[RMDB]
The record gives the reactivity of an RNA of 207 nucleotides to 2A3 and DMS. In probing experiments dimethyl sulfate is read out at A N1 and C N3, which are open when not base-paired. The data come from the RNA Mapping Database (RMDB), library OK3TST.
RNA sequence: GGGAACGACUCGAGUAGAGUCGAAAAUCAUGCAAAUGUUAAUUGACCACUUAAGUUAAAACUUCAUAAUGAUCGUUAAUAAUACCGAUGGGGGCACAUCUGGAGAGGAUGUCGUGGCUACGACAACUAUGGCCAAAAGAACAGGUUCAAAACCCUAGUAUUUAGUAUCAUUCGUGAUACUAAAUACAAAAGAAACAACAACAACAAC
Reactivity to 2A3 in 0.01 (KOAc 150mM, MgCl2 10mM, bicine 150mM(pH8.5), 24C), signal-to-noise 4, nucleotides 027 to 156: u060c010a010u090g030c060a070a060a050u070g020u080u100a070a040u120u110g040a020c020c000a030c090u100u130a070a040g040u030u110a040a100a070a060c040u090u070c050a070u100a200a090u140g050a040u040c010g010u040u030a100a070u090a150a040u050a150c020c040g040a090u080g000g000g000g020g000c030a010c000a040u010c030u040g030g010a050g010a010g090g010a030u050g010u040c030g010u020g050g000c020u070a020c030g060a020c010a030a010c030u050a070u090g050g000c010c000a010a110a000a000g020a030a030c030a030g000g040u040u060c030a040a050a030a120c010c000c000u000a030
Reactivity to DMS in 0.01 (KOAc 150mM, MgCl2 10mM, bicine 150mM(pH8.5), 24C), signal-to-noise 2, nucleotides 027 to 156: u010c060a050u000g000c060a070a130a140u000g060u000u000a000a100u000u020g030a020c000c010a040c020u020u000a040a070g000u000u010a090a060a060a220c040u000u000c110a110u000a050a070u010g020a020u000c020g020u010u010a020a100u000a070a100u000a090c040c000g000a080u000g000g010g030g050g070c060a040c030a040u010c020u000g050g010a140g000a160g020g000a080u000g020u010c050g080u020g020g020c050u000a110c080g010a060c030a040a060c080u000a090u000g000g020c030c020a040a060a040a110g010a080a080c080a010g030g010u010u000c040a040a080a050a130c040c000c000u000a240